Overview
This 177-nucleotide RNA was probed chemically with 2A3 and DMS. For DMS the reverse transcriptase was MarathonRT. 2A3 adducts were read by reverse transcription with SuperScript II with manganese.

[RMDB]
RNA sequence: GGGAACGACUCGAGUAGAGUCGAAAAAGUGCAGUAUUGACUGUCUUCAAACGCACCUGUCCUUGCUCAAGUGCUGGGAUUGUGUGCCAACGGCUAUGAUAGAUAUGAAUAGAGCACGAGAUAAUGUCGUUCCAUUAUGGUUCGCCAUAAUGGAACGAAAAGAAACAACAACAACAAC
Reactivity to 2A3 in 0.01 (KOAc 150mM, MgCl2 10mM, bicine 150mM(pH8.5), 24C), signal-to-noise 7, nucleotides 027 to 126: a000g050u050g000c030a040g050u070a040u070u060g100a120c010u020g030u010c000u060u070c040a080a050a020c050g000c000a000c000c000u000g000u000c000c000u000u010g000c000u070c110a220a120g110u090g130c000u010g000g000g030a020u000u050g100u010g000u010g150c020c000a080a020c060g080g010c050u080a040u130g030a040u080a060g050a010u050a030u220g070a070a020u060a030g100a020g060c010a010c020g030a030g030a090u180a180a080u150g060u050
Reactivity to DMS in 0.01 (KOAc 150mM, MgCl2 10mM, bicine 150mM(pH8.5), 24C), signal-to-noise 2, nucleotides 027 to 126: a120g000u000g020c000a120g000u000a050u000u000g020a300c250u020g000u000c010u010u000c010a090a080a190c300g000c000a010c010c000u000g020u000c000c000u040u000g020c010u000c230a170a040g020u070g000c010u000g000g000g030a000u030u000g000u060g000u000g000c090c100a040a140c160g030g050c170u000a050u000g000a020u010a000g000a030u000a000u000g000a060a030u000a010g000a220g000c040a000c010g020a130g000a110u000a080a080u020g020u000